[RMDB]
RNA sequence: GGGAACGACUCGAGUAGAGUCGAAAACGGAGAUCCUUCUCGAGCAGUCGCCUUUUCUUCCUUUCUUCUACCCACUGUUCGAGGAUCUCCUCCCUCUCCUUCGAGGACGGGUUCGCGACGGGUUGGCAUAGUUAUAACUUCGGUUAUAACAAAAGAAACAACAACAACAAC
Reactivity to 2A3 in 0.01 (KOAc 150mM, MgCl2 10mM, bicine 150mM(pH8.5), 24C), signal-to-noise 9, nucleotides 027 to 129: c090g010g000a000g000a020u010c020c020u140u130c090u040c060g000a000g000c000a000g020u090c070g090c050c010u090u120u060u060c070u060u110c030c020u090u110u100c040u110u030c030u070a100c010c010c010a020c000u000g010u020u010c000g000a010g000g010a000u000c000u000c000c000u010c000c010c000u010c010u010c000c020u080u120c060g050a070g040g020a050c040g020g020g000u030u050c030g010c010g030a040c030g020g010g000u020u020g010g000c020a020u060a090
Reactivity to DMS in 0.01 (KOAc 150mM, MgCl2 10mM, bicine 150mM(pH8.5), 24C), signal-to-noise 7, nucleotides 027 to 129: c170g000g020a030g000a000u020c010c100u030u030c100u040c060g000a010g000c000a010g000u040c110g030c090c050u020u010u010u000c080u020u020c050c040u020u030u020c050u000u000c070u020a140c050c010c040a140c030u000g020u000u000c000g030a020g000g000a050u000c020u020c000c000u030c000c000c000u000c030u000c030c050u030u050c100g000a060g010g000a070c030g020g020g040u020u030c050g030c000g020a140c090g020g020g030u000u000g010g030c050a070u020a080